[RMDB]
RNA sequence: GGGAACGACUCGAGUAGAGUCGAAAACGAAUCAUCUCGCCUUGUUCAGUCACGCGUAAGCCACCUUUCAGGCUGCCCGGAGGCUGAGAAAGCAACGCCGCAUGGGCAGGCGCGCCACCACGACCAAAAAACAGGUGUAAUUCGUUACACCUGUUUUAAAAGAAACAACAACAACAAC
Reactivity to 2A3 in 0.01 (KOAc 150mM, MgCl2 10mM, bicine 150mM(pH8.5), 24C), signal-to-noise 5, nucleotides 027 to 126: c020g040a020a050u130c020a070u030c050u020c050g040c000c010u100u080g050u080u060c030a030g020u030c030a030c060g040c010g020u040a110a030g020c010c010a050c020c010u080u220u150c050a020g040g000c020u020g010c000c000c000g020g020a050g010g000c020u030g020a030g070a110a100a010g120c030a050a050c060g010c010c000g050c070a050u050g020g010g000c000a000g020g010c010g010c020g000c000c010a030c010c010a030c030g080a070c020c040a050a120
Reactivity to DMS in 0.01 (KOAc 150mM, MgCl2 10mM, bicine 150mM(pH8.5), 24C), signal-to-noise 9, nucleotides 027 to 126: c070g000a100a080u000c100a100u000c040u000c050g020c040c040u000u000g010u000u000c030a060g010u000c040a080c070g010c150g010u000a070a080g010c030c030a080c140c090u000u000u010c140a130g010g010c010u000g010c010c020c010g000g000a180g000g000c000u000g000a160g010a060a100a100g010c090a070a120c130g010c020c020g000c110a240u010g000g000g010c020a050g000g000c040g020c070g000c020c020a040c030c020a050c070g010a100c030c070a000a040
The record gives the reactivity of an RNA of 177 nucleotides to 2A3 and DMS. For DMS the reverse transcriptase was MarathonRT. The reactions ran in a buffer of 150 mM KOAc, 10 mM MgCl2 and 150 mM bicine (pH 8.5), at 24 C. The data come from the RNA Mapping Database (RMDB), library OK2TST.